[RMDB]
RNA sequence: GGGAACGACUCGAGUAGAGUCGAAAAUAUGGAACAACAACUUGCAGCUCAUCUCUAUUGAUGAUACACUGCCUCUAGGACUGGGACAGAUAGCCACUGAGUACCUGCUUCAAAUCACCCUGCACGUUUUCUCUUUGGAAAGAUAAGCACUGGAGAAAUUUAAUGGACGGUUCGCCGUCCAUUAAAUAAAAGAAACAACAACAACAAC
Reactivity to DMS in 0.01 (KOAc 150mM, MgCl2 10mM, bicine 150mM(pH8.5), 24C), signal-to-noise 1, nucleotides 027 to 156: u000a080u000g000g020a100a130c030a090a060c040a050a070c050u010u010g030c020a120g050c060u010c030a020u000c010u010c130u000a170u010u020g000a040u000g000a140u020a080c070a140c060u020g000c000c060u010c030u000a080g000g000a100c030u010g010g030g020a070c030a070g000a090u020a080g030c020c060a110c060u010g000a020g010u010a060c090c030u000g030c000u000u000c070a060a050a100u000c020a070c050c020c010u010g000c040a060c070g050u010u010u000u010c020u010c050u000u010u000g050g000a030a100a120g000a110u000a010a050g020c010a060c090u000g000g010a140g010a080a140
Reactivity to 2A3 in 0.01 (KOAc 150mM, MgCl2 10mM, bicine 150mM(pH8.5), 24C), signal-to-noise 2, nucleotides 027 to 156: u130a030u030g080g020a110a000c010a020a000c020a010a030c130u030u160g030c030a000g010c020u020c020a020u010c010u010c070u210a120u290u160g030a050u030g010a010u090a050c100a000c030u040g010c020c000u050c000u050a100g040g020a100c060u020g020g010g020a000c000a020g050a080u090a030g020c000c030a040c060u010g010a000g030u060a080c020c030u030g020c090u090u060c050a030a080a170u090c010a010c000c020c000u000g000c100a050c070g000u020u000u000u080c030u020c000u050u070u020g060g010a140a100a030g080a060u050a070a050g030c030a010c010u030g050g020a040g020a030a170